[RMDB]
RNA sequence: GGGAACGACUCGAGUAGAGUCGAAAAGGGGAACUGACAAGUUUAGUAGGUGAACUUCCCUUGUCUCUAACCAUACAGAAUGUGGAGGCCCUCUUUGAGCUUGGCUGUUUGUGGUUCUUUCAUGGGUUUAUGGCGGGCUGCCAGAUCGUGGGCUGGGAGAUCCGAAUGAAUUCGUUCAUUCGGAUCUAAAAGAAACAACAACAACAAC
Reactivity to DMS in 0.01 (KOAc 150mM, MgCl2 10mM, bicine 150mM(pH8.5), 24C), signal-to-noise 1, nucleotides 027 to 156: g000g010g040g000a140a070c050u000g040a070c030a070a070g010u020u000u000a090g040u020a070g050g020u010g000a080a160c030u000u030c000c040c030u000u020g000u000c020u000c020u020a130a170c110c050a140u000a240c040a090g030a050a300u000g010u000g000g030a150g040g010c040c010c020u000c030u000u000u010g000a040g000c040u000u000g020g000c030u010g000u030u000u000g040u000g000g020u010u010c070u000u010u020c070a090u000g000g000g050u010u000u010a080u010g000g040c000g060g010g060c040u000g010c010c010a100g020a030u010c040g010u000g000g020g010c020u000g000g020g030
Reactivity to 2A3 in 0.01 (KOAc 150mM, MgCl2 10mM, bicine 150mM(pH8.5), 24C), signal-to-noise 1, nucleotides 027 to 156: g060g000g000g030a050a000c060u100g090a030c030a040a040g080u150u120u040a030g070u050a030g050g090u150g080a060a040c040u070u090c020c020c000u050u010g050u020c040u020c010u060a060a020c080c000a040u070a160c050a150g190a160a130u230g120u180g060g060a000g000g050c020c020c000u000c030u120u030u050g010a020g050c000u000u000g050g000c020u040g110u070u120u160g080u060g020g030u050u050c060u060u140u050c050a030u060g010g050g050u060u180u180a070u080g060g010c080g000g040g010c020u020g010c000c000a010g020a080u080c050g010u080g000g040g010c050u080g020g020g000